The data come from the RNA Mapping Database (RMDB), library OK2TRN. The record gives the reactivity of an RNA of 177 nucleotides to DMS and 2A3. DMS (dimethyl sulfate) methylates the pairing face of unpaired adenines and cytosines.
RNA sequence: GGGAACGACUCGAGUAGAGUCGAAAAGCUGACGUGUUGUGUGGAGAUGCUGUGCAGCCAGGUUUGCCGAUCGCCACCGUCGAGGGUGAGCACGGCGCGGUGCGAGCGAUCCACCAGCACGGCAUCGAUAUACAGUGCGCUUCGGCGCACUGUAUAUAAAAGAAACAACAACAACAAC
Reactivity to DMS in 0.01 (KOAc 150mM, MgCl2 10mM, bicine 150mM(pH8.5), 24C), signal-to-noise 3, nucleotides 027 to 126: g010c110u010g010a030c000g010u000g010u010u010g000u020g010u000g000g000a040g000a260u010g000c000u010g020u010g050c000a040g010c020c020a120g040g030u000u000u000g030c020c000g000a040u000c140g040c010c010a020c010c010g020u000c280g010a260g000g000g000u000g000a160g040c010a300c020g010g000c000g000c050g010g010u010g000c010g010a020g020c040g000a250u000c000c000a010c020c000a020g000c000a010c000g000g010c020a020u000c080g010
Reactivity to 2A3 in 0.01 (KOAc 150mM, MgCl2 10mM, bicine 150mM(pH8.5), 24C), signal-to-noise 2, nucleotides 027 to 126: g010c020u020g010a010c040g000u010g030u020u020g080u020g020u020g110g040a060g020a140u270g000c020u050g060u150g130c030a090g300c030c000a060g100g060u120u210u200g000c000c020g040a110u090c110g000c000c000a010c000c010g080u220c110g120a160g080g070g000u030g020a080g020c000a020c020g010g000c000g000c030g040g000u030g000c010g000a010g000c020g000a030u030c000c000a000c000c000a000g010c000a000c000g000g000c000a020u020c020g020
For DMS the reverse transcriptase was MarathonRT.
For DMS, 3,212 sequencing reads were counted.